[RMDB]
RNA sequence: GGGAACGACUCGAGUAGAGUCGAAAAUAAAAGGGGGCCAGAUGUCAUGUCUCUCAAGCCUAGGAGACACUAGACACUCUGGACUAUCGGAUAGAGGAAACCCCCCCAAAAAUGUAUAGGCGAAAAAACUAUCGUACUGAUUCGUCAGUACGAUAGUAAAAGAAACAACAACAACAAC
Reactivity to DMS in 0.01 (KOAc 150mM, MgCl2 10mM, bicine 150mM(pH8.5), 24C), signal-to-noise 2, nucleotides 027 to 126: u010a060a060a140a150g000g000g020g010g020c010c000a000g030a060u010g000u000c020a210u000g010u010c000u000c010u000c090a040a230g020c010c000u000a030g000g010a010g000a030c010a020c300u010a140g010a030c000a030c190u010c000u000g010g000a140c170u030a060u000c030g000g000a230u010a120g010a080g030g000a080a130a230c000c000c000c000c010c000c030a030a080a070a130a030u000g000u010a010u000a010g020g000c010g020a000a070a020a040a080
Reactivity to 2A3 in 0.01 (KOAc 150mM, MgCl2 10mM, bicine 150mM(pH8.5), 24C), signal-to-noise 2, nucleotides 027 to 126: u070a020a100a030a040g020g000g000g010g010c000c000a010g000a000u000g000u000c010a010u010g000u000c000u020c000u020c050a100a040g000c000c000u010a000g020g000a010g000a000c000a010c060u070a050g000a000c010a000c070u000c010u010g010g000a040c010u060a090u050c020g060g020a060u150a250g110a060g060g060a030a040a050c000c000c010c030c000c000c040a000a210a030a070a010u140g050u100a130u020a070g000g000c000g020a120a040a000a000a010
The record gives the reactivity of an RNA of 177 nucleotides to DMS and 2A3.
High DMS reactivity at an A or C suggests that its Watson-Crick edge is free.
Source: RMDB library M2PK90, as collected in RNAgym.
Values cover nucleotides 27 to 126.